[RMDB]
Description:
Chemical mapping of a 170-nucleotide RNA with 2A3. Reactivities are given for positions 27 through 129.
RNA sequence: GGGAACGACUCGAGUAGAGUCGAAAACCUCCAAUAAAAAGGAAAGACCCACCCACUGGGGUCCGACGUCCCACCCUUUCUUACCUUUUGGCCGGCAUGGUCCCAGCCUCCUCGCUGGCGCCGGCUGUCAGUCGGGGGUUCGCCCCCGACAAAAGAAACAACAACAACAAC
Reactivity to 2A3 in 0.01 (KOAc 150mM, MgCl2 10mM, bicine 150mM(pH8.5), 24C), signal-to-noise 2, nucleotides 027 to 129: c000c000u050c000c030a120a170u230a170a050a000a020a000g060g000a090a080a040g070a040c000c000c000a000c000c040c000a020c020u050g100g000g000g000u020c000c000g070a060c000g020u000c010c010c000a040c000c040c000u050u060u090c000u080u050a180c040c040u070u080u070u120g030g000c000c000g000g000c000a030u020g150g000u120c000c000c000a000g000c000c010u130c000c000u160c060g000c060u000g010g000c030g000c000c030g030g040c040u000g020u080c020a000

2A3 adducts were read by reverse transcription with SuperScript II with manganese. High 2A3 reactivity points to a flexible backbone, as in loops and unpaired stretches.